This 177-nucleotide RNA was probed chemically with DMS and 2A3.
Values cover nucleotides 27 to 126.
For 2A3 the reverse transcriptase was SuperScript II with manganese.
RNA sequence: GGGAACGACUCGAGUAGAGUCGAAAAUGGAGUAUCGAAAGUGAUUAGAUACCGCAGUAGUUCCAGCAGUAAAAGAUGCCGACAUGCUCAUUGGACACAGUGGGCAGGGAGAAAUCUUAAGAGUUCGAUCGUAAGAUCAAUUCGUUGAUCUUACGAUAAAAGAAACAACAACAACAAC
Reactivity to DMS in 0.01 (KOAc 150mM, MgCl2 10mM, bicine 150mM(pH8.5), 24C), signal-to-noise 9, nucleotides 027 to 126: u020g010g010a110g010u000a010u000c010g010a110a110a070g010u040g000a120u010u010a220g000a030u000a010c010c030g010c060a060g010u010a110g010u010u000c010c010a120g010c150a110g020u020a070a080a040a030g000a020u000g010c300c020g000a170c040a060u000g000c010u000c000a010u000u000g000g000a140c300a080c010a020g030u010g000g000g000c010a010g000g010g000a190g010a040a180a020u000c010u000u000a070a100g000a100g000u010u000c070g000
Reactivity to 2A3 in 0.01 (KOAc 150mM, MgCl2 10mM, bicine 150mM(pH8.5), 24C), signal-to-noise 9, nucleotides 027 to 126: u130g040g010a160g020u020a010u020c020g060a090a040a060g190u170g090a090u060u080a050g010a020u010a020c000c020g040c030a060g050u170a010g010u020u010c020c010a020g030c050a020g080u160a010a120a050a010g020a010u050g040c010c010g070a090c050a080u020g010c000u000c000a010u000u020g040g020a100c080a030c000a300g010u010g000g000g000c010a010g020g020g010a080g050a030a100a020u020c020u050u050a100a040g090a050g110u070u100c040g020